[RMDB]
Notes:
Chemical mapping of a 177-nucleotide RNA with 2A3 and DMS.

RNA sequence: GGGAACGACUCGAGUAGAGUCGAAAAGAUAUGGAUCCCAUAGGGAGCUCAGUCGGAAACGACGGAGCGAGGAUCUAUGUGGAUCCUAAGUCAAAUCAUGCAGCGAUGUUCGCAUCGCUGCAUGAAAGUUGAUUCUCUACUUCGGUAGAGAAUCAACAAAAGAAACAACAACAACAAC
Reactivity to 2A3 in 0.01 (KOAc 150mM, MgCl2 10mM, bicine 150mM(pH8.5), 24C), signal-to-noise 1, nucleotides 027 to 126: g060a010u090a020u190g000g000a010u010c000c030c000a000u030a010g040g030g020a010g000c000u000c010a010g010u000c000g050g030a040a080a040c010g000a020c060g000g000a000g010c010g000a070g010g020a030u050c030u020a000u010g210u300g050g000a020u040c030c000u000a020a000g000u000c010a000a000a240u060c000a010u030g010c010a010g020c000g020a000u000g030u090u260c300g030c100a010u000c000g000c010u030g030c010a000u000g000a000a000a010
Reactivity to DMS in 0.01 (KOAc 150mM, MgCl2 10mM, bicine 150mM(pH8.5), 24C), signal-to-noise 1, nucleotides 027 to 126: g000a050u000a300u000g000g010a020u010c000c000c010a010u000a030g010g000g000a030g000c020u000c000a030g000u010c000g000g020a130a080a150c010g020a000c000g000g020a000g010c010g010a040g000g010a040u020c010u000a010u010g010u000g050g010a010u000c000c010u000a000a090g030u010c030a110a150a200u000c010a000u000g000c050a010g000c000g020a020u000g000u000u010c240g020c000a020u000c000g030c000u010g000c000a000u000g000a020a040a090
It was measured as part of the RMDB library TTRDEL.